[RMDB]
RNA sequence: GGGAACGACUCGAGUAGAGUCGAAAAUUUCAGCUGGUGUCAAUGGGUUAGUAGGUUUCAUACCAACGCUACCUAAGUUUUUGCGGUUGAAAAGUACAUACCAUACUAAACCUAAUGCCAUACCAACACGAUCAUAAGUAUUCGUACUUAUGAUCGUAAAAGAAACAACAACAACAAC
Reactivity to DMS in 0.01 (KOAc 150mM, MgCl2 10mM, bicine 150mM(pH8.5), 24C), signal-to-noise 6, nucleotides 027 to 126: u010u010u010c020a080g020c110u010g030g000u000g000u020c070a050a100u010g000g000g020u010u000a020g000u010a010g000g000u000u010u010c180a210u020a060c080c010a070a170c110g010c020u000a070c140c120u020a130a080g020u020u030u040u020u030g010c180g000g010u010u010g000a050a040a060a120g010u010a020c190a120u010a050c040c010a130u010a020c010u010a000a010a040c020c000u000a020a030u010g000c050c100a040u010a110c020c040a050a070c120
Reactivity to 2A3 in 0.01 (KOAc 150mM, MgCl2 10mM, bicine 150mM(pH8.5), 24C), signal-to-noise 9, nucleotides 027 to 126: u040u030u050c030a040g020c070u050g010g000u020g050u060c040a090a180u120g010g000g010u020u010a010g000u010a010g010g030u010u040u080c100a080u090a070c010c010a030a010c030g000c010u070a090c010c040u150a140a130g040u030u030u030u190u180g050c060g070g000u010u030g050a120a120a030a020g020u010a030c030a100u130a020c010c010a080u010a020c010u030a040a110a130c010c000u050a110a050u060g010c020c010a040u080a090c020c000a050a030c040

This 177-nucleotide RNA was probed chemically with DMS and 2A3. Values cover nucleotides 27 to 126. Conditions: 150 mM KOAc, 10 mM MgCl2 and 150 mM bicine (pH 8.5), 24 C. The DMS profile rests on 12,671 reads. For 2A3 the reverse transcriptase was SuperScript II with manganese. The data come from the RNA Mapping Database (RMDB), library OK1LIB. For DMS the reverse transcriptase was MarathonRT.